[RMDB]
RNA sequence: GGGAACGACUCGAGUAGAGUCGAAAAGUACUCUGUGGCUGAGUAAUUGACCUAUAAGUAUAAGUAGAUACCUCUGUUAAUUUGACAGUCGAUGGUCCAAAGGCUACCUCUUGUGAAGCCACUAGGAACUUACGUGCUAGUUCGCUAGCACGUAAGUAAAAGAAACAACAACAACAAC
Reactivity to 2A3 in 0.01 (KOAc 150mM, MgCl2 10mM, bicine 150mM(pH8.5), 24C), signal-to-noise 2, nucleotides 027 to 126: g020u020a010c010u000c040u050g020u020g020g000c010u000g000a010g000u020a050a070u060u040g080a060c010c010u060a070u020a200a000g090u040a070u020a190a050g080u060a010g040a100u060a060c000c010u050c010u040g000u040u060a170a220u270u180u300g020a000c000a010g040u080c090g110a160u130g020g010u020c030c020a090a050a030g070g000c000u010a030c050c010u000c010u040u080g070u040g140a060a000g020c010c010a020c030u050a040g150g020a050
Reactivity to DMS in 0.01 (KOAc 150mM, MgCl2 10mM, bicine 150mM(pH8.5), 24C), signal-to-noise 3, nucleotides 027 to 126: g010u000a030c000u000c000u000g020u000g010g000c010u000g000a050g020u000a040a070u010u010g000a130c010c000u000a110u010a080a150g010u000a120u000a040a120g000u000a070g000a090u000a100c030c040u000c020u010g020u010u000a080a160u000u010u000g000a040c020a030g020u000c140g010a140u000g020g010u000c040c100a050a080a070g000g000c090u020a050c040c020u000c080u000u000g020u000g000a080a040g000c000c000a010c030u020a180g010g000a150
About this RNA
This 177-nucleotide RNA was probed chemically with 2A3 and DMS. Source: RMDB library OK2TST, as collected in RNAgym. For 2A3 the reverse transcriptase was SuperScript II with manganese. The RNA was probed in 150 mM KOAc, 10 mM MgCl2 and 150 mM bicine (pH 8.5) at 24 C.